[RMDB]
RNA sequence: GGGAACGACUCGAGUAGAGUCGAAAACAGGUCCGUCGAUUCGAACGUGAACGGAAGAUAGCUUCAGAGUCAUUAGUGAAUCCCUCCACUGGCUUGCGACGGCAUUCUUUCUGCGCGAGCGGAUGCGACGCGCCCGUCAGUUCGCUGACGGGCGCGUAAAAGAAACAACAACAACAAC
Reactivity to DMS in 0.01 (KOAc 150mM, MgCl2 10mM, bicine 150mM(pH8.5), 24C), signal-to-noise 3, nucleotides 027 to 126: c110a110g010g000u000c030c030g000u000c010g010a110u000u000c050g010a040a040c100g020u000g030a100a110c130g000g000a010a040g000a090u010a270g010c010u000u000c050a300g000a030g000u000c010a120u010u010a040g010u000g000a110a140u010c080c030c010u000c060c010a080c050u000g000g010c030u000u000g020c080g000a100c200g000g000c060a170u000u000c040u000u000u000c030u020g020c050g000c030g010a110g020c000g000g000a020u000g000c080g020
Reactivity to 2A3 in 0.01 (KOAc 150mM, MgCl2 10mM, bicine 150mM(pH8.5), 24C), signal-to-noise 2, nucleotides 027 to 126: c030a060g050g140u100c010c050g020u020c030g050a100u000u040c020g030a040a050c030g050u080g050a120a040c030g010g000a000a000g000a050u070a070g020c030u080u050c080a040g000a010g080u020c030a120u080u300a070g050u050g070a130a160u120c010c030c040u070c040c010a020c000u000g050g020c010u040u040g000c100g050a080c040g020g050c000a000u020u040c000u020u030u070c020u040g000c000g000c020g010a000g000c020g030g000a020u090g120c030g000
Source information
An RNA of 177 nucleotides, treated with DMS and 2A3 and read out base by base. The data come from the RNA Mapping Database (RMDB), library OK2TRN. The DMS profile rests on 2,064 reads.